Chemical mapping of a 177-nucleotide RNA with 2A3 and DMS. For 2A3 the reverse transcriptase was SuperScript II with manganese. DMS adducts were read by reverse transcription with MarathonRT. The DMS profile rests on 989 reads. Source: RMDB library M2PK50, as collected in RNAgym. The reactions ran in a buffer of 150 mM KOAc, 10 mM MgCl2 and 150 mM bicine (pH 8.5), at 24 C.
[RMDB]
RNA sequence: GGGAACGACUCGAGUAGAGUCGAAAAUCGGGUUUCUUCGGAAACCCGAAAAUAAAAUCAGCGGUUAAAAAGCUCGGGUUAUAACCGCUGAACGCGAGCUUAAAAGAUCGCAGUUCGCUGCGAUCAACAACACUUUACUCUUCGGAGUAAAGUGUUGAAAAGAAACAACAACAACAAC
Reactivity to 2A3 in 0.01 (KOAc 150mM, MgCl2 10mM, bicine 150mM(pH8.5), 24C), signal-to-noise 1, nucleotides 027 to 126: u030c000g010g000g020u010u000u000c010u040u080c230g050g010a030a000a000c010c010c000g000a010a000a000a010u000a000a020a000a070u010c010a000g000c000g000g080u010u000a100a110a170a160a150g020c070u080c170g220g010g020u110u120a130u020a100a000c000c000g000c000u000g020a000a000c040g060c040g050a060g000c020u140u160a120a110a000a000g000a000u000c000g000c000a000g020u010u030c180g020c050u000g000c000g020a000u000c000a000a010
Reactivity to DMS in 0.01 (KOAc 150mM, MgCl2 10mM, bicine 150mM(pH8.5), 24C), signal-to-noise 1, nucleotides 027 to 126: u000c000g020g020g010u000u010u000c000u000u040c110g010g000a000a040a000c000c000c000g020a000a010a050a080u000a080a070a150a110u020c020a000g030c000g020g010u000u020a010a080a110a120a120g000c090u000c030g000g010g020u000u000a160u010a020a020c020c000g000c010u000g000a000a040c140g020c100g000a040g000c090u010u010a060a060a140a070g000a000u000c000g020c000a000g040u010u000c140g010c000u000g030c000g020a010u000c000a110a120